[RMDB]
RNA sequence: GGGAACGACUCGAGUAGAGUCGAAAAUGCGCAAGGCGAUCCAGUCGGCGAUGCGUCAGCCCAACGUCAAGGGAAUCCGGGUGCAGUGCUCGGGCCGCCUCGGCGGCGCGGAAAUGAGCCGCUCGGAGCUACCGGUAGAUUUCGAUCUACCGGUAGCAAAAGAAACAACAACAACAAC
Reactivity to 2A3 in 0.01 (KOAc 150mM, MgCl2 10mM, bicine 150mM(pH8.5), 24C), signal-to-noise 1, nucleotides 027 to 126: u120g000c010g000c030a060a140g090g040c030g020a020u080c140c070a100g160u060c030g000g100c010g070a160u110g020c000g000u070c030a060g030c000c000c010a020a050c060g110u120c100a040a060g000g060g040a060a120u010c000c000g000g070g000u030g070c140a070g000u040g160c030u020c000g020g000g000c010c000g090c040c000u050c100g110g020c010g000g000c090g040c010g130g060a060a040a160u190g010a030g000c000c010g000c010u000c000g030g000a030
Reactivity to DMS in 0.01 (KOAc 150mM, MgCl2 10mM, bicine 150mM(pH8.5), 24C), signal-to-noise 2, nucleotides 027 to 126: u010g000c030g030c030a040a120g020g010c050g010a070u000c180c110a050g020u020c020g010g000c050g000a080u000g000c030g040u000c090a160g000c010c020c000a130a110c180g000u000c050a110a020g000g000g000a170a190u000c010c050g000g040g010u000g010c160a220g070u000g010c020u000c030g010g000g030c000c010g000c000c020u010c300g000g030c020g020g020c010g000c070g020g020a110a080a070u000g000a020g000c010c030g000c000u000c030g010g000a080

Conditions: 150 mM KOAc, 10 mM MgCl2 and 150 mM bicine (pH 8.5), 24 C. Structure probing data (2A3 and DMS) for a 177-nucleotide construct. The data come from the RNA Mapping Database (RMDB), library OK2TST. Values cover nucleotides 27 to 126. For 2A3 the reverse transcriptase was SuperScript II with manganese. For DMS, 964 sequencing reads were counted. The 2A3 profile rests on 1,052 reads.